[RMDB]
RNA sequence: GGGAACGACUCGAGUAGAGUCGAAAAGACGGAACAGCGUGUAUCUCGCCGAUAGCCAUCGACGAGGUGGUGAGCAGUGGCAGCGACCACGUCCUCCGCAUGCGGGUUGGUUCUCAAUCGGGAGUGAUCUCUGUCGUUGAUUCGUCAACGACAGAGAAAAAGAAACAACAACAACAAC
Reactivity to 2A3 in 0.01 (KOAc 150mM, MgCl2 10mM, bicine 150mM(pH8.5), 24C), signal-to-noise 2, nucleotides 027 to 126: g020a040c010g040g000a070a020c040a080g050c020g080u050g010u080a080u000c020u010c000g040c020c000g070a050u090a040g130c070c120a010u000c040g020a040c070g020a040g010g060u000g000g050u110g030a040g050c090a050g000u070g000g000c070a070g180c040g000a050c010c000a000c050g150u100c000c050u020c000c000g000c020a050u080g080c020g000g050g010u030u050g120g050u110u020c000u010c000a010a080u100c060g100g020g020a080g040u080g110a050
Reactivity to DMS in 0.01 (KOAc 150mM, MgCl2 10mM, bicine 150mM(pH8.5), 24C), signal-to-noise 2, nucleotides 027 to 126: g000a090c060g020g010a070a040c120a100g000c030g000u010g010u010a030u000c020u000c040g000c020c010g000a050u000a180g020c130c090a080u000c000g020a060c050g010a110g010g040u000g000g010u000g010a080g020c140a140g000u000g000g040c020a110g010c180g000a100c070c000a020c040g010u010c110c070u000c020c020g000c040a050u010g010c040g020g000g000u000u000g020g010u000u000c050u000c070a070a070u000c080g000g000g000a090g000u000g010a160